The record gives the reactivity of an RNA of 177 nucleotides to DMS and 2A3. The DMS profile rests on 5,272 reads. For DMS the reverse transcriptase was MarathonRT. 2A3 adducts were read by reverse transcription with SuperScript II with manganese.

RNA sequence: GGGAACGACUCGAGUAGAGUCGAAAAUGAACUGCCGGAACUGACUGCAGAAUUCAUCAAACGUUUCGGCGUUGAAGAUGGUUCCGUAGAAGGUCUGCGCGCUGAAGUGCGUAAAAACAUGGAGCGCCAGGGAAACACUAUUCGUAGUGUUUCCCUGAAAAGAAACAACAACAACAAC
Reactivity to DMS in 0.01 (KOAc 150mM, MgCl2 10mM, bicine 150mM(pH8.5), 24C), signal-to-noise 5, nucleotides 027 to 126: u000g010a100a130c080u010g010c040c050g000g000a040a030c010u000g000a300c050u010g020c030a030g000a070a030u000u000c020a020u000c030a110a050a050c060g010u000u000u010c120g020g010c000g030u000u000g010a090a110g000a040u000g010g000u000u000c000c040g040u000a030g000a090a200g000g000u000c020u000g000c070g000c010g030c020u000g000a160a180g000u000g010c000g010u000a030a070a080a070a090c050a020u010g000g000a120g010c000g020c040
Reactivity to 2A3 in 0.01 (KOAc 150mM, MgCl2 10mM, bicine 150mM(pH8.5), 24C), signal-to-noise 4, nucleotides 027 to 126: u100g020a050a050c030u090g060c070c020g030g020a100a080c010u020g090a020c020u040g000c030a010g110a030a060u300u250c020a030u000c010a060a030a020c030g010u030u020u060c200g110g010c010g000u000u030g070a100a060g020a020u030g030g000u030u000c010c010g000u020a020g010a080a010g010g000u000c020u040g010c040g000c010g000c060u070g040a100a010g040u010g020c020g010u050a000a010a020a030a030c020a030u060g050g020a030g020c020g000c020